[RMDB]
RNA sequence: GGGAACGACUCGAGUAGAGUCGAAAAGAUAUGGAAUCCCUAGGGAGAAGCGUCGGAAACGACGCUUCGAGGAUCUAGGAUUCCUAAGUCAAAGUCGCUAGAUACCCUUCGGGGUAUCUAGCGACAACGUAAAACCUCAGUUCGCUGAGGUUUUACGAAAAGAAACAACAACAACAAC
Reactivity to DMS in 0.01 (KOAc 150mM, MgCl2 10mM, bicine 150mM(pH8.5), 24C), signal-to-noise 1, nucleotides 027 to 126: g000a030u000a300u000g000g010a000a000u000c100c040c000u000a000g010g000g000a050g020a040a000g010c000g020u010c000g000g000a100a060a210c010g010a010c010g020c000u000u000c000g000a040g000g010a010u020c010u000a020g020g050a070u000u000c000c000u000a040a090g020u010c020a170a100a090g000u010c000g030c000u020a020g020a020u000a010c010c000c000u000u030c260g030g000g000g010u000a000u000c000u000a000g000c010g000a000c000a010a030